[RMDB]
RNA sequence: GGGAACGACUCGAGUAGAGUCGAAAAUGCGAGAAGAGCGCAAACAUGGAACGCUCUCCAAGGCUGUUGCAGGAUGGGGUAAAUAAUGGGAAACCUGAUCGUAUAUGACGAUAUACACGCGGUGCUGAAACGGUACCUGGAACAUAACCUUAGUGUGUGAAUGGGGAGGAUUCGUCCUCCCCAUUCAAAAAGAAACAACAACAACAAC
Reactivity to DMS in 0.01 (KOAc 150mM, MgCl2 10mM, bicine 150mM(pH8.5), 24C), signal-to-noise 2, nucleotides 027 to 156: u000g020c030g010a280g000a020a050g020a010g000c040g010c030a040a060a100c130a090u020g010g000a170a040c020g020c000u020c000u000c020c000a140a130g060g030c030u020g010u000u020g010c030a180g000g020a130u010g020g000g010g010u000a050a080a120u010a040a100u010g020g020g010a100a060a080c040c030u000g000a200u000c070g050u000a040u010a110u010g000a030c120g000a170u000a120u010a050c000a120c040g020c170g040g000u000g010c020u030g010a090a090a040c160g040g020u000a070c010c010u000g030g000a100a080c060a100u020a030a130c020c030u010u000a050g020u010g000u050g000
Reactivity to 2A3 in 0.01 (KOAc 150mM, MgCl2 10mM, bicine 150mM(pH8.5), 24C), signal-to-noise 1, nucleotides 027 to 156: u120g010c080g020a000g000a100a000g000a000g010c000g030c060a030a170a000c100a150u110g050g080a050a000c000g000c000u050c000u000c000c010a040a010g070g030c020u040g060u280u090g000c000a020g000g030a050u070g000g010g000g070u030a020a050a000u220a080a140u110g010g040g040a090a000a070c000c030u050g030a030u040c040g010u030a010u030a050u100g060a090c120g030a030u040a000u000a050c000a000c090g010c050g000g020u080g070c000u000g040a300a120a050c110g000g000u000a050c000c000u000g060g050a150a000c030a100u050a010a000c000c000u000u080a030g010u050g070u090g020